An RNA of 207 nucleotides, treated with 2A3 and read out base by base. It was measured as part of the RMDB library OK3TST. Reactivities are given for positions 27 through 156.
RNA sequence: GGGAACGACUCGAGUAGAGUCGAAAAGGCGUCGACGUCGCCGCCGCUGCUUCUGCCAGCAAUUAGGCAACAGUUAAAUUAAACGGGUUUCUAGUUCAAGGACACGACCCAGCGACGACGUGCCGGCGCAACAACAAUAACAAGGGGGGGAAAAUGAUCCUCCUAAUCCUUUCGAGGAUUAGGAGGAAAAAGAAACAACAACAACAAC
Reactivity to 2A3 in 0.01 (KOAc 150mM, MgCl2 10mM, bicine 150mM(pH8.5), 24C), signal-to-noise 1, nucleotides 027 to 156: g160g000c000g020u000c000g000a020c000g020u010c010g000c010c050g040c000c030g000c000u000g000c050u220u150c010u130g020c030c000a010g110c090a220a200u210u140a210g030g030c020a030a110c000a150g050u030u050a030a080a060u160u150a070a040a000c090g000g000g000u010u120u090c110u280a110g080u160u020c110a040a120g120g000a080c010a010c150g000a010c000c000c000a010g000c010g010a010c000g000a000c010g000u010g130c100c080g000g000c000g020c020a000a000c010a000a040c000a020a020u190a000a000c050a100a230g000g000g000g000g090g000g030a000a090a070a000u250g000a000